[RMDB]
This 177-nucleotide RNA was probed chemically with DMS. The DMS profile rests on 2,648 reads. Conditions: 150 mM KOAc, 10 mM MgCl2 and 150 mM bicine (pH 8.5), 24 C. Source: RMDB library TTRDES, as collected in RNAgym. DMS adducts were read by reverse transcription with MarathonRT.
RNA sequence: GGGAACGACUCGAGUAGAGUCGAAAAGAUAUGGAGCGACCCACCUUCGAGGAUCGUACAUCGGAAACGAUGUACGGGAGAAGUGGGCGCUCCUAAGUCAAAAGCACGUUCCUUCGGGAACGUGCAAGAUAUACUUCCGCUUCGGCGGAAGUAUAUCAAAAGAAACAACAACAACAAC
Reactivity to DMS in 0.01 (KOAc 150mM, MgCl2 10mM, bicine 150mM(pH8.5), 24C), signal-to-noise 3, nucleotides 027 to 126: g020a020u000a030u020g000g010a020g020c000g000a230c000c000c020a030c060c300u000u000c010g020a050g040g000a020u000c000g000u000a010c000a000u000c000g020g000a030a040a020c000g010a010u010g000u000a010c000g000g010g010a010g000a030a220g030u000g000g000g010c010g010c000u000c000c000u010a000a050g010u010c020a080a110a080a180g000c010a000c000g010u000u000c000c010u000u020c260g020g020g000a010a010c010g010u000g000c010a000a010